Chemical mapping of a 207-nucleotide RNA with 2A3 and DMS. The RNA was probed in 150 mM KOAc, 10 mM MgCl2 and 150 mM bicine (pH 8.5) at 24 C. It was measured as part of the RMDB library OK3TST. The 2A3 profile rests on 8,674 reads. For DMS, 9,526 sequencing reads were counted.
[RMDB]
RNA sequence: GGGAACGACUCGAGUAGAGUCGAAAAUCAGUCUGCCCCUACUGGGUGGUGCCUCCCAGUUAGGCUACUCGGGGGUCAGGGACCCACUUGAGAAGGCAGUCUGUCCAUUCUCAGAUCUCAAAUGCUGUGCUGGGAGAACCACUACUCUCUUGAAACCAAAUGAUUAGUGAUUCGUCACUAAUCAUUUAAAAGAAACAACAACAACAAC
Reactivity to 2A3 in 0.01 (KOAc 150mM, MgCl2 10mM, bicine 150mM(pH8.5), 24C), signal-to-noise 8, nucleotides 027 to 156: u110c010a010g110u020c030u080g060c000c020c000c000u040a070c100u080g020g010g000u010g010g020u020g030c020c000u000c020c000c000a000g000u040u100a070g010g000c020u070a060c070u100c150g050g010g000g000g040u030c050a120g090g080g050a020c020c000c020a090c060u090u200g010a010g010a050a020g040g010c040a030g120u050c060u060g050u020c050c020a150u140u010c030u000c020a110g020a200u050c050u030c090a110a160a070u180g000c010u030g030u040g060c010u000g000g000g010a020g000a010a010c010c010a000c000u010a020c000u000c000u010c000u060u130g090a130a080a070c080c020
Reactivity to DMS in 0.01 (KOAc 150mM, MgCl2 10mM, bicine 150mM(pH8.5), 24C), signal-to-noise 4, nucleotides 027 to 156: u000c050a080g020u000c050u000g020c020c000c010c040u000a080c080u010g020g010g000u000g040g000u000g010c120c010u010c010c010c010a050g000u000u000a210g010g030c020u000a090c060u000c050g020g020g020g060g030u000c070a190g040g040g000a100c010c010c020a030c100u000u000g020a030g010a110a170g000g020c010a120g010u000c080u000g030u000c030c030a150u010u010c020u010c010a090g010a100u000c020u000c020a090a090a130u000g000c030u000g030u020g030c010u000g020g030g010a060g000a130a040c210c030a060c020u000a060c030u010c020u000c030u000u000g010a110a100a130c110c060